[RMDB]
This 207-nucleotide RNA was probed chemically with DMS and 2A3. 2A3 adducts were read by reverse transcription with SuperScript II with manganese. It was measured as part of the RMDB library OK3TST. The DMS profile rests on 2,695 reads. Values cover nucleotides 27 to 156. For DMS the reverse transcriptase was MarathonRT.

RNA sequence: GGGAACGACUCGAGUAGAGUCGAAAAGGAUAAAGAAGGCGGUGAAGCUUUUCUUGCAAUGUGGUCAAAAAAAGCGGGAGUUGAUGGUAUCACUGCGGGGAUCGGGAUUGUCGCCGGAAAAGACAGUGAAGGCAGGCCUGUAAGUCAGGUUGCAAUACAAAAUGAGUAGUUUCGACUACUCAUUUUGAAAAGAAACAACAACAACAAC
Reactivity to DMS in 0.01 (KOAc 150mM, MgCl2 10mM, bicine 150mM(pH8.5), 24C), signal-to-noise 1, nucleotides 027 to 156: g000g000a130u010a090a100a110g010a100a080g020g000c030g030g000u010g000a080a210g010c010u000u000u040u000c000u000u000g020c070a070a080u020g010u000g030g050u010c010a000a000a060a050a030a030a100g000c040g030g000g000a110g000u000u010g020a090u000g010g000u020a170u000c030a030c040u000g020c060g000g000g000g000a110u000c060g030g030g010a120u000u000g020u000c040g030c010c030g000g010a020a060a060a040g000a120c020a060g010u000g000a060a100g020g000c020a100g000g010c050c010u010g050u000a050a090g020u000c020a040g010g020u010u000g010c030a070a120u000a160
Reactivity to 2A3 in 0.01 (KOAc 150mM, MgCl2 10mM, bicine 150mM(pH8.5), 24C), signal-to-noise 1, nucleotides 027 to 156: g020g010a070u070a060a090a000g040a040a010g000g030c040g010g040u020g050a060a020g000c000u070u050u040u030c010u020u020g030c030a010a030u090g030u080g100g000u130c070a150a000a000a000a000a000a000g010c020g000g030g000a090g020u100u030g030a060u050g060g020u070a030u120c040a040c060u050g020c030g030g010g000g030a030u090c060g010g050g000a050u070u070g030u040c030g010c020c040g000g040a010a080a000a000g030a010c020a020g030u020g050a020a030g050g020c050a000g050g050c000c010u070g010u160a090a090g040u110c030a000g000g010u050u010g040c020a060a020u120a130